[RMDB]
RNA sequence: GGGAACGACUCGAGUAGAGUCGAAAAAUCGGUUGAGUCAUUAAGCCCACCGAUGUCACUCCAGCCUGAUGCAGCAUAUUAAGGGCCUUAAUGAUUUCAUCAUAAGGAACCUCUUUCGCACCGCCGACGAUUUAAACGAAUUCGUUCGUUUAAAUCGAAAAGAAACAACAACAACAAC
Reactivity to 2A3 in 0.01 (KOAc 150mM, MgCl2 10mM, bicine 150mM(pH8.5), 24C), signal-to-noise 8, nucleotides 027 to 126: a000u030c020g010g000u050u070g030a050g060u070c060a130u130u160a110a050g000c000c010c000a010c010c020g030a020u040g050u070c020a010c090u020c020c010a020g030c010c020u060g010a050u080g010c030a030g000c040a040u060a060u190u190a100a040g020g020g030c000c010u040u050a130a060u050g020a010u070u220u120c080a060u000c010a020u020a060a020g050g020a110a170c000c010u050c040u030u080u050c040g010c030a040c050c030g050c030c030g020a050
Reactivity to DMS in 0.01 (KOAc 150mM, MgCl2 10mM, bicine 150mM(pH8.5), 24C), signal-to-noise 9, nucleotides 027 to 126: a040u000c020g010g010u010u010g010a030g020u010c050a110u010u000a100a170g010c010c010c010a050c060c040g000a030u000g010u010c120a110c080u000c030c040a080g000c030c030u010g010a070u000g010c040a090g010c060a070u010a080u010u010a090a050g000g010g000c030c020u000u000a050a040u000g010a020u000u010u010c180a070u000c030a020u010a030a040g010g000a060a100c040c010u000c110u000u000u000c090g000c040a080c040c030g010c080c050g000a200
This 177-nucleotide RNA was probed chemically with 2A3 and DMS. For 2A3 the reverse transcriptase was SuperScript II with manganese. It was measured as part of the RMDB library OK2TST. The 2A3 profile rests on 13,954 reads. The DMS profile rests on 15,612 reads. For DMS the reverse transcriptase was MarathonRT. The reactions ran in a buffer of 150 mM KOAc, 10 mM MgCl2 and 150 mM bicine (pH 8.5), at 24 C.